Conditions: 150 mM KOAc, 10 mM MgCl2 and 150 mM bicine (pH 8.5), 24 C. The record gives the reactivity of an RNA of 207 nucleotides to 2A3 and DMS. DMS adducts were read by reverse transcription with MarathonRT. DMS (dimethyl sulfate) methylates the pairing face of unpaired adenines and cytosines.
[RMDB]
RNA sequence: GGGAACGACUCGAGUAGAGUCGAAAAACAUGCUGGCCAACCCAACCCCACGAUCCUCCAUCGGCAUGAUCAUGAUGUGUUCUCAAAUAUCAGGCCAGUAAACCACCAUGCUCGUGCUGGUAAAGGCAACUUAUGCCCAAGUUCGCUUGGGCAUAAAGAACCAUCAAUACUUCGGUAUUGAUGGUUCAAAAGAAACAACAACAACAAC
Reactivity to 2A3 in 0.01 (KOAc 150mM, MgCl2 10mM, bicine 150mM(pH8.5), 24C), signal-to-noise 5, nucleotides 027 to 156: a010c060a030u060g000c010u010g000g020c000c000a050a040c070c010c050a040a090c050c040c020c010a090c100g080a120u100c000c020u030c030c030a030u040c010g000g000c020a010u020g010a020u010c010a000u010g040a040u060g090u020g050u140u050c060u010c080a070a090a020u260a100u190c110a080g000g030c000c010a000g000u020a040a040a040c030c010a010c000c010a010u020g000c010u000c000g010u000g000c000u000g000g000u040a060a060a040g030g010c020a040a040c040u000u010a000u010g000c000c010c010a000a010g010u030u040c100g030c160u000u010g020g000g000c010a000u000a000a000a000
Reactivity to DMS in 0.01 (KOAc 150mM, MgCl2 10mM, bicine 150mM(pH8.5), 24C), signal-to-noise 1, nucleotides 027 to 156: a100c040a050u000g000c000u000g000g000c040c030a140a180c100c010c030a150a140c030c010c000c010a120c180g000a080u010c020c000u020c030c050a080u000c020g060g000c040a030u000g040a030u000c040a060u000g000a030u000g000u000g000u000u000c070u010c040a170a090a180u000a080u020c110a170g010g020c000c020a090g000u010a020a060a050c050c010a020c020c010a060u000g000c100u020c040g020u000g030c000u000g000g020u000a020a070a050g010g000c060a030a090c120u000u000a020u000g030c000c000c000a020a030g020u000u000c290g020c020u000u000g000g010g030c010a000u000a000a030a120